[RMDB]
An RNA of 177 nucleotides, treated with 2A3 and read out base by base.
The RNA was probed in 150 mM KOAc, 10 mM MgCl2 and 150 mM bicine (pH 8.5) at 24 C.
The data come from the RNA Mapping Database (RMDB), library OK1LIB.
2A3 adducts were read by reverse transcription with SuperScript II with manganese.
RNA sequence: GGGAACGACUCGAGUAGAGUCGAAAAGAGUGGGUGGAGGUGGGGAAGGAUUGCAGUCGGUGAACGGACGCUGAAUUGACGGUUGCCACGUCCUGGGGGACGUGGAAUCCGGCCAUCGGAGACCGACCGGUGCCCUUUUAUUCGUAAAAGGGCACCGAAAAGAAACAACAACAACAAC
Reactivity to 2A3 in 0.01 (KOAc 150mM, MgCl2 10mM, bicine 150mM(pH8.5), 24C), signal-to-noise 1, nucleotides 027 to 126: g130a030g000u120g030g030g090u200g000g100a100g060g090u300g000g000g000g030a000a090g000g070a090u040u300g000c100a000g000u040c000g020g050u000g050a040a010c020g020g000a060c040g000c000u000g120a200a060u150u200g070a040c000g010g010u000u070g100c000c000a000c010g000u020c000c050u150g160g040g170g000g000a000c000g030u030g000g000a000a000u040c040c000g030g000c040c000a040u030c000g000g000a000g120a000c010c000g000a000c000